[RMDB]
RNA sequence: GGGAACGACUCGAGUAGAGUCGAAAAGCGCGUCUGGCCGACGGGUUGCCGGCUUACGGUGCGUGCACGGGUAUGAUUCUACUGGCCAGUGAGAUCCUCGACGCUGGCGUGUGUGGGCGUGAGGCGACCCUAGUCCUACGUUCGCGUAGGACUAGGGAAAAGAAACAACAACAACAAC
Reactivity to DMS in 0.01 (KOAc 150mM, MgCl2 10mM, bicine 150mM(pH8.5), 24C), signal-to-noise 2, nucleotides 027 to 126: g010c020g000c020g000u000c010u000g000g030c050c010g000a080c090g000g000g030u010u000g040c020c020g010g020c050u000u000a070c160g010g010u000g000c030g000u010g010c080a060c060g000g000g040u000a080u000g000a110u000u000c050u010a080c030u000g020g020c020c010a020g020u010g010a100g000a130u010c030c030u010c050g000a100c050g020c020u000g000g000c000g020u000g010u010g010u010g000g000g020c060g000u010g000a130g000g000c090g030a140
Reactivity to 2A3 in 0.01 (KOAc 150mM, MgCl2 10mM, bicine 150mM(pH8.5), 24C), signal-to-noise 1, nucleotides 027 to 126: g000c030g010c000g020u010c040u050g000g000c010c000g020a050c040g020g160g040u080u200g010c040c000g020g000c010u030u060a060c110g000g010u070g030c030g040u020g000c040a030c010g090g020g000u090a110u230g090a070u140u030c030u050a080c010u070g130g000c000c000a000g000u030g030a040g000a140u020c000c020u010c010g040a010c000g000c010u040g030g030c030g000u020g000u000g010u030g020g040g030c060g010u070g060a060g040g000c040g020a070